[RMDB]
RNA sequence: GGGAACGACUCGAGUAGAGUCGAAAAAGCUCACACUCAGCCUGUCUCUGGUUCUGUUUUCUGCAGGAAAGCUCCUCCUUUGUAACUGUCCUCAGAGUCUGUAGCUUAACUGCCUUUUAGUGAGGUCCAUUUGCUGUUUCACUAACUCAUCGGGGAGGUAACUUUCCCAUUUCGAUGGGAAAGUUACAAAAGAAACAACAACAACAAC
Reactivity to 2A3 in 0.01 (KOAc 150mM, MgCl2 10mM, bicine 150mM(pH8.5), 24C), signal-to-noise 1, nucleotides 027 to 156: a010g050c010u000c010a060c000a010c040u080c020a010g050c030c010u050g040u040c010u000c010u060g070g060u080u090c010u030g120u090u080u030u060c030u090g040c000a030g000g000a110a110a000g010c030u020c040c000u010c010c010u110u050u060g060u120a100a080c050u090g080u090c000c040u080c040a010g030a010g040u000c030u080g080u100a000g030c000u060u030a120a030c020u220g000c020c030u040u100u040u050a080g000u090g050a000g060g010u050c000c050a090u040u020u070g010c050u010g020u060u080u010c040a030c070u090a160a010c000u000c020a150u090c120g020g000g000g040a050g060
Notes:
The data come from the RNA Mapping Database (RMDB), library OK3TST. Chemical mapping of a 207-nucleotide RNA with 2A3. The reactions ran in a buffer of 150 mM KOAc, 10 mM MgCl2 and 150 mM bicine (pH 8.5), at 24 C.